About this RNA
Structure probing data (2A3 and DMS) for a 177-nucleotide construct. The RNA was probed in 150 mM KOAc, 10 mM MgCl2 and 150 mM bicine (pH 8.5) at 24 C. It was measured as part of the RMDB library 15KREP. DMS adducts were read by reverse transcription with MarathonRT.
[RMDB]
RNA sequence: GGGAACGACUCGAGUAGAGUCGAAAAGAAACGCUGUAUUAUCAGAACAAUGUCUUUAUGUCUGAAGCUAAAUGCUGGGUGGAAACCGAUCUGAAGAAAGGGCCACAUGAAUUCUGUUCACAGCAUAUCAUAGUACCGAGUUCGCUCGGUACUAUGAAAAAGAAACAACAACAACAAC
Reactivity to 2A3 in 0.01 (KOAc 150mM, MgCl2 10mM, bicine 150mM(pH8.5), 24C), signal-to-noise 1, nucleotides 027 to 126: g030a030a030a000c050g000c010u000g040u010a140u150u040a090u230c010a010g000a070a000c030a040a100u070g080u060c040u050u250u090a110u130g050u020c030u090g050a040a010g000c030u030a100a070a070u060g010c050u020g000g140g000u010g000g000a150a100a050c010c000g000a040u000c000u040g210a150a080g010a020a090a010g000g000g030c020c010a000c000a020u030g000a010a060u120u000c080u120g010u070u080c020a000c000a020g000c000a000u010a020
Reactivity to DMS in 0.01 (KOAc 150mM, MgCl2 10mM, bicine 150mM(pH8.5), 24C), signal-to-noise 2, nucleotides 027 to 126: g030a080a060a100c170g000c030u010g010u000a150u010u010a150u010c030a010g000a070a090c110a090a060u010g000u000c040u000u010u010a020u000g020u010c020u000g000a070a110g000c030u010a080a060a050u020g000c020u000g000g000g000u000g000g010a060a070a110c000c010g020a230u010c010u010g040a110a130g020a020a030a280g000g000g020c010c000a010c030a020u000g000a070a070u000u020c140u000g010u000u020c140a140c010a020g000c010a040u000a100